[RMDB]
RNA sequence: GGGAACGACUCGAGUAGAGUCGAAAAUUAGGACUGCGUUGAGAAGCGUCGAGCCCCGAGUGCCUGAUAUAGUGUAUCACGAGGGAGACUGGGGUAAGGAGCCUAUGAUGGUCUUCCUGGGCGUAACGCCGCCAUCAUAUUUCGAUAUGAUGGCGGCAAAAGAAACAACAACAACAAC
Reactivity to 2A3 in 0.01 (KOAc 150mM, MgCl2 10mM, bicine 150mM(pH8.5), 24C), signal-to-noise 3, nucleotides 027 to 126: u220u110a040g020g020a020c080u110g050c110g030u120u090g170a110g090a240a020g070c020g020u040c020g040a000g000c010c000c000c000g110a130g000u100g130c000c030u020g020a040u020a000u080a300g150u140g090u050a090u200c100a090c130g050a080g000g010g000a020g030a020c030u070g030g000g000g000u020a100a000g080g010a070g000c000c000u120a110u300g100a070u270g070g000u000c000u000u030c000c040u000g000g010g000c000g060u070a080a000c170
Reactivity to DMS in 0.01 (KOAc 150mM, MgCl2 10mM, bicine 150mM(pH8.5), 24C), signal-to-noise 2, nucleotides 027 to 126: u000u040a090g050g000a070c020u020g030c010g000u000u020g000a160g000a180a050g030c070g000u000c050g000a130g000c000c000c030c020g020a050g030u030g000c110c000u000g000a090u020a140u000a130g030u050g000u010a050u030c050a080c160g000a170g020g000g000a020g010a040c070u030g000g000g000g010u010a090a120g020g000a110g050c020c010u000a110u070g010a040u030g000g000u010c000u000u030c030c000u000g000g000g010c060g000u000a090a070c190